Notes: An RNA of 177 nucleotides, treated with DMS and 2A3 and read out base by base. The reactions ran in a buffer of 150 mM KOAc, 10 mM MgCl2 and 150 mM bicine (pH 8.5), at 24 C. For DMS the reverse transcriptase was MarathonRT. For 2A3 the reverse transcriptase was SuperScript II with manganese.
[RMDB]
RNA sequence: GGGAACGACUCGAGUAGAGUCGAAAAUGUCAAGUCGAUACUUAUAUGGCAGGGCCACUUAUUAAUGCAUUACCCUCUAUUAUGCAUAUUCAACAUGAGAACCAGACCACUCCUCCUGAAUGGUUGAAUUUAUUUAGUACUUCGGUACUAAAUAAAUAAAAGAAACAACAACAACAAC
Reactivity to DMS in 0.01 (KOAc 150mM, MgCl2 10mM, bicine 150mM(pH8.5), 24C), signal-to-noise 9, nucleotides 027 to 126: u010g010u000c060a060a100g020u000c110g010a090u010a060c080u000u000a090u010a100u010g010g020c050a060g000g010g010c030c050a050c080u000u000a070u010u010a070a060u000g010c020a020u010u000a110c070c040c040u000c090u010a090u000u000a040u000g010c030a030u000a090u000u000c110a040a060c080a050u000g010a100g000a090a090c060c040a080g000a080c040c040a060c050u000c020c060u000c050c040u000g010a060a060u000g010g010u010u000g010a090
Reactivity to 2A3 in 0.01 (KOAc 150mM, MgCl2 10mM, bicine 150mM(pH8.5), 24C), signal-to-noise 5, nucleotides 027 to 126: u110g010u020c010a010a040g040u040c030g050a040u030a160c020u140u080a120u050a060u300g040g000c020a020g050g000g000c030c000a020c030u040u100a080u120u160a160a030u050g000c010a010u010u100a110c020c030c000u050c040u070a150u200u040a020u100g010c010a010u020a070u150u110c040a060a070c020a060u080g020a020g010a090a010c030c010a010g040a020c000c010a020c020u040c010c010u030c000c010u040g080a110a070u080g060g000u000u020g010a000